[RMDB]
RNA sequence: GGGAACGACUCGAGUAGAGUCGAAAAACAGCCGUGCCUCAAUCUCUGAGCGAGAUGGUGGCCGACUACGACUGGGACCACAACGAGGCCCUGAGGGAGACCCCGUACGUCUCUUCGGCGUGCGCCGCGUACGAUUUGGGUUCGCCCAAAUCGUACGAAAAGAAACAACAACAACAAC
Reactivity to DMS in 0.01 (KOAc 150mM, MgCl2 10mM, bicine 150mM(pH8.5), 24C), signal-to-noise 3, nucleotides 027 to 126: a070c090a060g010c040c020g010u010g000c000c000u000c000a100a050u000c010u000c000u000g030a220g030c270g020a010g020a020u000g000g000u000g020g020c010c040g000a040c090u000a070c120g010a120c090u020g020g000g000a080c030c010a060c130a120a120c210g000a090g000g000c000c010c030u000g020a120g010g010g000a150g000a200c010c010c020c020g000u010a020c060g020u010c020u010c250u020u000c160g000g030c020g010u000g020c110g010c070c080g000
Reactivity to 2A3 in 0.01 (KOAc 150mM, MgCl2 10mM, bicine 150mM(pH8.5), 24C), signal-to-noise 2, nucleotides 027 to 126: a020c030a010g040c030c010g130u200g020c000c000u020c020a040a050u000c040u010c020u150g240a120g150c110g030a000g010a010u040g020g010u030g000g010c000c000g030a050c030u080a050c040g140a050c070u100g000g000g160a190c010c020a050c020a170a140c080g010a060g020g020c000c000c000u040g050a100g000g030g020a070g020a030c000c000c000c000g000u020a020c010g000u000c010u020c000u300u270c140g010g010c020g000u020g010c000g000c000c040g050

The record gives the reactivity of an RNA of 177 nucleotides to DMS and 2A3.
For 2A3 the reverse transcriptase was SuperScript II with manganese.
The 2A3 profile rests on 2,744 reads.
The reactions ran in a buffer of 150 mM KOAc, 10 mM MgCl2 and 150 mM bicine (pH 8.5), at 24 C.